[RMDB]
RNA sequence: GGGAACGACUCGAGUAGAGUCGAAAAUGCGGCGGAUUUAUCUUGCAAGAUUCGGUUACUUCCACAGCGUGCCGCGUGGCGGAUCCCCUGAAAAGGCUGUUUAAGUUGGGUAAACCGCUCCCAGCCGCGCUGAAUAAUCAUUCGUGAUUAUUCAGCGAAAAGAAACAACAACAACAAC
Reactivity to 2A3 in 0.01 (KOAc 150mM, MgCl2 10mM, bicine 150mM(pH8.5), 24C), signal-to-noise 3, nucleotides 027 to 126: u100g000c020g010g000c020g000g000a000u050u090u040a030u090c060u060u100g040c070a070a070g030a260u090u060c020g010g050u060u050a060c020u090u010c000c040a040c040a050g030c020g100u080g030c030c030g030c050g030u060g030g000c010g000g060a110u200c160c050c030c030u060g060a040a060a020a020g080g000c040u050g080u150u130u140a060a050g030u110u100g030g000g000u010a020a040a030c020c010g000c020u000c000c000c000a020g030c020c010g000
Reactivity to DMS in 0.01 (KOAc 150mM, MgCl2 10mM, bicine 150mM(pH8.5), 24C), signal-to-noise 7, nucleotides 027 to 126: u010g020c030g000g020c010g010g010a090u010u000u010a030u010c030u010u000g020c130a130a130g000a080u000u000c050g020g010u000u010a090c110u000u010c070c050a100c100a080g010c050g020u010g020c040c020g020c040g010u000g020g010c050g000g000a160u010c120c030c020c080u000g000a060a100a080a130g010g000c060u000g010u010u000u010a050a140g010u000u000g010g000g010u000a050a060a080c030c010g010c060u000c010c020c010a110g000c040c090g010
Source: RMDB library OK2TST, as collected in RNAgym. Chemical mapping of a 177-nucleotide RNA with 2A3 and DMS. For DMS the reverse transcriptase was MarathonRT. Conditions: 150 mM KOAc, 10 mM MgCl2 and 150 mM bicine (pH 8.5), 24 C.